The record gives the reactivity of an RNA of 177 nucleotides to DMS. DMS adducts were read by reverse transcription with MarathonRT.
[RMDB]
RNA sequence: GGGAACGACUCGAGUAGAGUCGAAAAGGUGCCCUAUCCGAGCACUGCAGUUUCGGUAGAAAGGCUAAGCACCUCGCAAUGAGGUAAGGUGGGACUUUUCCUUCAGGAACCAAGCGGUUGGUUCCGAGAGACUUACCUUCUUCGGAAGGUAAGUCUCAAAAGAAACAACAACAACAAC
Reactivity to DMS in 0.01 (KOAc 150mM, MgCl2 10mM, bicine 150mM(pH8.5), 24C), signal-to-noise 1, nucleotides 027 to 126: g020g000u000g000c000c030c010u000a040u000c010c040g040a050g010c050a130c130u020g020c160a170g020u000u000u000c020g000g010u000a040g020a070a100a030g000g000c040u000a100a090g020c040a140c000c000u000c030g030c160a100a110u000g000a060g010g000u010a070a100g020g000u010g000g000g000a040c050u000u000u010u000c010c050u000u000c150a140g010g000a020a010c000c030a010a060g000c260g030g000u000u000g010g010u000u000c010c000g000a100

Conditions: 150 mM KOAc, 10 mM MgCl2 and 150 mM bicine (pH 8.5), 24 C.